[RMDB]
RNA sequence: GGGAACGACUCGAGUAGAGUCGAAAACUUACUGUAGGCUUGACCUCCUGGGCUCAGGCAAUCCUCACACCUUAGCCUCCCAUCUAGAUGGGACUACAGAUGCAUGUCACCAUGCUGGGGGCUAAUUUUUUAUUUUUUGUAGACUCAGGGUCUUACAAAUAUGGGCUAAUUUCGAUUAGCCCAUAUUAAAAGAAACAACAACAACAAC
Reactivity to 2A3 in 0.01 (KOAc 150mM, MgCl2 10mM, bicine 150mM(pH8.5), 24C), signal-to-noise 1, nucleotides 027 to 156: c000u080u240a060c030u210g120u190a020g000g090c000u130u070g030a140c000c060u050c040c110u150g000g040g040c030u020c000a000g000g050c060a030a000u000c060c050u090c010a190c000a030c010c030u000u000a020g000c000c020u200c040c040c000a030u150c090u090a190g020a120u020g000g000g060a030c000u030a020c020a030g160a140u170g090c050a030u070g040u100c050a030c300c020a020u020g020c000u000g030g030g010g000g020c000u000a020a000u050u060u000u000u000u050a130u060u040u040u000u120u000g000u000a000g000a000c000u000c030a050g000g050g090u030c050u050u050a010c030a030
Reactivity to DMS in 0.01 (KOAc 150mM, MgCl2 10mM, bicine 150mM(pH8.5), 24C), signal-to-noise 1, nucleotides 027 to 156: c040u000u000a070c110u010g000u000a030g020g020c030u000u000g000a120c010c010u000c020c070u020g040g080g000c090u010c020a050g040g020c000a080a050u000c070c020u000c100a110c100a060c030c040u000u010a040g000c020c010u010c000c000c030a070u000c070u000a090g040a110u020g010g020g020a110c000u000a040c060a120g000a120u000g030c020a140u020g010u000c030a130c030c010a110u000g010c110u000g010g020g030g020g010c010u000a020a000u000u000u000u000u000u000a080u040u000u010u010u020u010g000u000a040g000a050c000u000c040a090g020g020g010u000c010u010u000a040c030a100
An RNA of 207 nucleotides, treated with 2A3 and DMS and read out base by base. For 2A3, 457 sequencing reads were counted. Reactivities are given for positions 27 through 156.